[RMDB]
RNA sequence: GGGAACGACUCGAGUAGAGUCGAAAAGAUAUGGAUAUGGACAUGACGAUGGGUUCGGAAACGAACCCGCGUCAACAGCCAUCAUCCUAAGUCAAAAGUUAGGACCUGGUUCGCCAGGUCCUAACAACCACAGGGAAGUGUUCGCACUUCCCUGUGGAAAAGAAACAACAACAACAAC
Reactivity to DMS in 0.01 (KOAc 150mM, MgCl2 10mM, bicine 150mM(pH8.5), 24C), signal-to-noise 1, nucleotides 027 to 126: g000a040u010a300u000g000g000a020u000a020u000g000g030a120c140a260u010g000a020c000g000a090u010g030g000g000u000u000c000g000g000a050a050a300c000g010a010a010c000c000c000g030c000g000u000c000a040a050c300a140g040c010c000a010u000c190a000u000c000c000u010a030a080g010u000c070a070a080a110a160g010u000u000a000g030g010a000c000c010u000g000g000u000u010c300g040c000c000a010g000g000u000c020c000u020a000a010c000a040a150